[RMDB]
RNA sequence: GGGAACGACUCGAGUAGAGUCGAAAAGCUCUACCAGAAACUUCUGCCGAUAUUCUGGUGGUUGAUGAGGUUAGUAUGUGCACUAAUUAUGAUCUUUCAAUUAUUAAUGCACGUAUUAAAGCUAAGCGUAGAAAUAGACGUUCGCGUCUAUUUCUACAAAAGAAACAACAACAACAAC
Reactivity to DMS in 0.01 (KOAc 150mM, MgCl2 10mM, bicine 150mM(pH8.5), 24C), signal-to-noise 2, nucleotides 027 to 126: g010c020u000c060u000a030c000c000a040g010a080a100a130c050u000u010c040u000g000c200c110g000a120u000a120u000u020c030u000g020g030u000g000g000u000u000g000a050u000g030a270g000g010u010u010a020g000u000a000u000g000u000g000c010a000c040u000a000a020u000u030a080u000g000a060u000c210u000u000u000c020a030a130u000u000a030u010u000a000a000u000g000c000a010c000g000u000a000u000u000a020a050a130g010c020u000a110a120g020c250
Reactivity to 2A3 in 0.01 (KOAc 150mM, MgCl2 10mM, bicine 150mM(pH8.5), 24C), signal-to-noise 2, nucleotides 027 to 126: g030c000u010c010u060a010c000c010a050g120a110a210a190c020u030u060c040u080g070c030c010g060a060u050a170u190u080c040u110g020g010u010g010g000u040u020g040a090u100g070a000g070g020u060u000a000g020u000a010u010g010u000g010c000a000c010u010a000a030u040u060a020u030g040a020u060c100u060u300u030c060a140a070u070u020a000u000u060a060a000u000g010c010a000c010g000u000a010u010u030a010a040a020g050c030u000a080a000g070c040